The data come from the RNA Mapping Database (RMDB), library OK3TST. Chemical mapping of a 207-nucleotide RNA with 2A3.

RNA sequence: GGGAACGACUCGAGUAGAGUCGAAAACAGGGGCUGCGAGACAGAUCACGAGCCUCAGAGCCAAGUUGCAGCCUCAGAGCCGAGUUGCAGCGGAGCCAGUAAUUCAAACCAUCCUGACCCUUCGGUGAACCUGAACCUGCUGACCUUGACAGCACUAGACGCGUGAGUGAUUCGUCACUCACGCGUCAAAAGAAACAACAACAACAAC
Reactivity to 2A3 in 0.01 (KOAc 150mM, MgCl2 10mM, bicine 150mM(pH8.5), 24C), signal-to-noise 1, nucleotides 027 to 156: c080a020g060g000g010g000c000u060g040c010g040a100g090a150c040a080g180a190u150c120a030c210g010a010g000c020c030u090c090a010g010a030g050c030c020a050a040g060u120u090g050c000a000g020c030c000u000c000a030g000a000g040c030c000g050a020g010u110u050g040c020a040g010c040g050g040a010g000c040c030a040g020u140a110a160u230u180c140a060a000a000c010c050a010u040c000c010u030g000a070c090c000c000u020u080c070g000g000u040g010a060a060c010c010u040g030a000a040c000c000u010g000c000u020g040a110c000c080u150u070g010a060c010a040g050c000a020c080u050a000